[RMDB]
RNA sequence: GGGAACGACUCGAGUAGAGUCGAAAAGGGUGAGACCUAGGAACCGUAGGGGUAUUCUCAAAGGAAGCUUUUUCAGUGACGCCCAUGUAAGUGGGAUAUAACAACAGAACUCGUAUGAGUAGCCUAAUAAAUCGGACCUUCUUCGGAAGGUCCGAAACCUUUAGAGGAAGUUCGCUUCCUCUAAAGGAAAAGAAACAACAACAACAAC
Reactivity to 2A3 in 0.01 (KOAc 150mM, MgCl2 10mM, bicine 150mM(pH8.5), 24C), signal-to-noise 1, nucleotides 027 to 156: g000g020g020u040g010a070g040a050c000c020u030a040g060g040a080a050c040c070g030u120a050g010g020g000g000u060a110u090u040c040u040c050a060a040a010g070g020a040a010g020c000u080u060u050u120u160c010a020g040u000g040a020c060g020c010c030c010a000u060g060u090a080a130g010u000g000g030g000a010u020a040u030a090a030c040a000a020c010a000g070a040a010c020u020c040g050u220a060u110g010a020g050u040a020g050c010c010u070a120a070u090a110a190a080u050c000g000g000a000c000c000u000u000c000u030u040c100g080g000a000a000g000g000u000c030c000g000a000a000a010
Reactivity to DMS in 0.01 (KOAc 150mM, MgCl2 10mM, bicine 150mM(pH8.5), 24C), signal-to-noise 1, nucleotides 027 to 156: g010g020g050u000g020a090g020a090c010c030u000a210g070g020a120a060c030c020g010u000a040g000g010g010g030u000a090u000u000c030u010c060a070a110a160g000g020a070a090g020c050u000u000u000u010u000c030a080g010u000g030a170c110g010c010c020c010a060u030g010u010a070a190g000u000g000g000g010a030u000a020u000a130a090c050a020a100c090a090g030a090a060c050u000c030g020u000a090u010g000a080g000u000a070g020c110c000u010a070a110u000a040a130a130u000c000g010g010a060c000c000u000u000c010u000u000c250g020g030a030a020g030g030u000c000c000g000a000a050a010
The record gives the reactivity of an RNA of 207 nucleotides to 2A3 and DMS. The DMS profile rests on 1,980 reads. Values cover nucleotides 27 to 156. Conditions: 150 mM KOAc, 10 mM MgCl2 and 150 mM bicine (pH 8.5), 24 C. It was measured as part of the RMDB library M2RFPK.